[RMDB]
RNA sequence: GGGAACGACUCGAGUAGAGUCGAAAAGAUAUGGAGCCUAUACUUUUGACGUACGAAGACAGUCGGAAACGAUCGAGUACGAUAAGUAUAAGGCUCCUAAGUCGGGGGUAUCUCUUCGGAGAUACAAUCAAAAGAGUUGCUUCGGCAACUCUUUUGAAAAAGAAACAACAACAACAAC
Reactivity to DMS in 0.01 (KOAc 150mM, MgCl2 10mM, bicine 150mM(pH8.5), 24C), signal-to-noise 1, nucleotides 027 to 126: g050a060u000a300u000g000g000a000g030c000c000u000a030u000a000c000u000u010u010u010g000a170c150g000u000a000c010g020a150a070g020a070c300a100g000u000c030g020g000a120a040a170c020g000a010u000c020g000a300g010u000a000c010g040a150u010a010a010g000u000a000u020a050a120g050g010c000u000c000c000u020a000a080g020u000c000g000g000g000g000g010u000a000u000c000u000c000u000u020c300g050g000a000g010a000u000a000c050a030a050
Background
Conditions: 150 mM KOAc, 10 mM MgCl2 and 150 mM bicine (pH 8.5), 24 C. This 177-nucleotide RNA was probed chemically with DMS. Source: RMDB library TTRDEL, as collected in RNAgym.